Structure probing data (2A3) for a 177-nucleotide construct.
For 2A3 the reverse transcriptase was SuperScript II with manganese.
[RMDB]
RNA sequence: GGGAACGACUCGAGUAGAGUCGAAAAGAUAUGGAUCCGACUCUUCUUGGAUUUAGCUAGUACAGCAAUGUAUGUCGGAAACGACAUACUAGCUGUACUAGCUUGUCAGAAGAGCGGAUCCUAAGUCCGGUUUACAAAUGUUCGCAUUUGUAAACCGAAAAGAAACAACAACAACAAC
Reactivity to 2A3 in 0.01 (KOAc 150mM, MgCl2 10mM, bicine 150mM(pH8.5), 24C), signal-to-noise 2, nucleotides 027 to 126: g040a040u230a140u300g030g000a000u000c000c000g300a300c140u000c000u080u040c080u150u300g290g020a130u300u300u110a010g000c000u000a010g000u020a040c020a000g060c070a110a030u300g000u010a000u010g000u020c040g070g100a110a080a000c050g000a020c000a000u000a000c010u000a000g000c000u030g000u000a010c010u000a000g000c000u000u000g010u000c010a000g000a010a000g000a000g000c030g000g020a000u000c010c020u000a040a010g030u000c040
The reactions ran in a buffer of 150 mM KOAc, 10 mM MgCl2 and 150 mM bicine (pH 8.5), at 24 C.